[RMDB]
RNA sequence: GGGAACGACUCGAGUAGAGUCGAAAAGAUAUGGAUGUACGAAAUGUAUUCAGCGUUGAAAUCGGAAACGAUGGAGCUGAUACAAUAAGUACAUCCUAAGUCAAAGUGUGUCCUUCGGGACACACAAGUUUACAAUCAUGUUCGCAUGAUUGUAAACAAAAGAAACAACAACAACAAC
Reactivity to DMS in 0.01 (KOAc 150mM, MgCl2 10mM, bicine 150mM(pH8.5), 24C), signal-to-noise 9, nucleotides 027 to 126: g010a040u000a300u000g010g000a010u000g010u000a000c000g000a080a260a130u000g000u000a010u020u010c000a000g020c000g020u010u010g000a060a110a020u000c000g000g000a120a090a190c010g010a020u000g000g000a120g010c000u000g000a010u000a000c000a000a010u000a060a280g000u000a000c000a000u000c000c000u000a010a070g010u000c050a090a100a140g010u000g010u000g000u000c000c000u000u010c230g030g010g000a010c000a000c000a000c000a010a060
Reactivity to 2A3 in 0.01 (KOAc 150mM, MgCl2 10mM, bicine 150mM(pH8.5), 24C), signal-to-noise 9, nucleotides 027 to 126: g040a020u080a040u150g010g000a000u010g000u010a000c010g020a110a100a070u020g010u000a040u140u300c010a000g000c010g300u300u060g030a030a030a010u010c000g010g030a090a040a030c020g000a010u020g020g020a010g000c000u000g000a000u000a000c000a000a010u040a010a000g000u000a000c000a000u000c000c000u000a010a000g000u000c050a060a110a110g010u010g000u000g000u000c010c000u010u040c300g100g000g000a000c000a000c000a000c000a000a010
Annotation:
Conditions: 150 mM KOAc, 10 mM MgCl2 and 150 mM bicine (pH 8.5), 24 C. Chemical mapping of a 177-nucleotide RNA with DMS and 2A3. The DMS profile rests on 17,112 reads. For 2A3 the reverse transcriptase was SuperScript II with manganese.